[RMDB]
RNA sequence: GGGAACGACUCGAGUAGAGUCGAAAAUUAAACACCGGUGAGCCUUGCAACAGCAGGCCGAUGGGCUGGGCAAGGGGGUCGCAAGACCUCCCGGCUGCAAGGUAAUUUACAUCGGCUGGUUCUGCGUCGGGCACCUUGGCGCAGGAUGAGAUUCAAGGGAACAUAAUUAGUUCGCUAAUUAUGUUCCAAAAGAAACAACAACAACAAC
Reactivity to 2A3 in 0.01 (KOAc 150mM, MgCl2 10mM, bicine 150mM(pH8.5), 24C), signal-to-noise 3, nucleotides 027 to 156: u060u040a060a040a010c050a040c040c000g030g020u060g050a030g000c010c000u000u020g000c040a110a060c020a140g040c010a000g020g070c000c010g020a070u110g020g040g000c010u010g030g100g000c020a050a060g040g010g070g000g000u000c010g010c060a080a040g010a000c000c000u020c000c000c020g050g010c020u040g000c020a020a000g020g000u030a020a080u090u130u110a040c000a010u010c010g000g000c010u030g020g010u020u010c000u010g000c000g000u000c000g000g050g090c120a120c040c050u040u190g000g000c020g000c010a000g000g010a020u040g020a030g010a030u120u230c120a120a070g090
Reactivity to DMS in 0.01 (KOAc 150mM, MgCl2 10mM, bicine 150mM(pH8.5), 24C), signal-to-noise 3, nucleotides 027 to 156: u010u000a070a130a090c060a060c020c000g030g050u010g010a180g000c000c010u000u000g030c000a020a050c020a300g030c040a280g020g000c000c010g000a100u010g020g030g020c000u000g020g030g020c070a110a040g020g030g000g040g030u000c020g010c300a080a180g010a030c010c010u000c000c000c010g000g040c020u050g020c000a020a030g000g050u010a010a050u000u010u000a160c020a030u000c010g000g020c040u000g020g000u000u000c000u000g010c000g040u000c020g010g000g020c070a170c070c040u000u010g010g010c010g030c010a020g000g000a020u000g000a070g010a170u000u000c020a020a130g000